RNA sequence: GGGAACGACUCGAGUAGAGUCGAAAAGAUAUGGAGAAGACCGAUAAGCUCGUAUCGGAAACGAUAUAGAGCUUUUGACGGUCCUCCUAAGUCAAAACUGCUAUGCGACUUCGGUCGCAUAGCAGAACGUUAUUCAUUAGUUCGCUAAUGAAUAACGAAAAGAAACAACAACAACAAC
Reactivity to DMS in 0.01 (KOAc 150mM, MgCl2 10mM, bicine 150mM(pH8.5), 24C), signal-to-noise 6, nucleotides 027 to 126: g010a030u000a300u000g000g000a020g010a150a140g010a010c000c000g000a120u000a020a020g010c000u000c000g010u000a010u000c010g000g000a090a070a130c010g010a010u000a010u000a080g000a010g010c000u000u000u000u000g010a200c050g010g000u000c010c000u000c000c000u000a030a120g010u000c030a080a060a100a170c000u000g000c000u000a000u000g000c000g000a010c000u000u010c200g020g000u000c000g000c000a000u000a000g010c000a000g000a010a080
Reactivity to 2A3 in 0.01 (KOAc 150mM, MgCl2 10mM, bicine 150mM(pH8.5), 24C), signal-to-noise 5, nucleotides 027 to 126: g010a010u080a040u130g030g020a030g040a300a130g010a050c010c020g030a070u030a170a000g000c000u000c000g010u010a010u010c010g010g020a180a030a020c020g000a000u010a010u050a210g020a000g010c010u020u020u000u010g030a020c010g000g010u000c010c000u000c000c000u010a120a010g040u030c030a010a020a100a210c000u010g000c000u010a000u000g000c010g010a000c000u050u120c300g080g010u000c000g020c010a000u010a000g020c000a000g000a010a000

Structure probing data (DMS and 2A3) for a 177-nucleotide construct. For 2A3, 15,844 sequencing reads were counted. 2A3 is a SHAPE reagent: it acylates the 2'-hydroxyl of flexible nucleotides of all four kinds. For DMS, 9,975 sequencing reads were counted. Values cover nucleotides 27 to 126.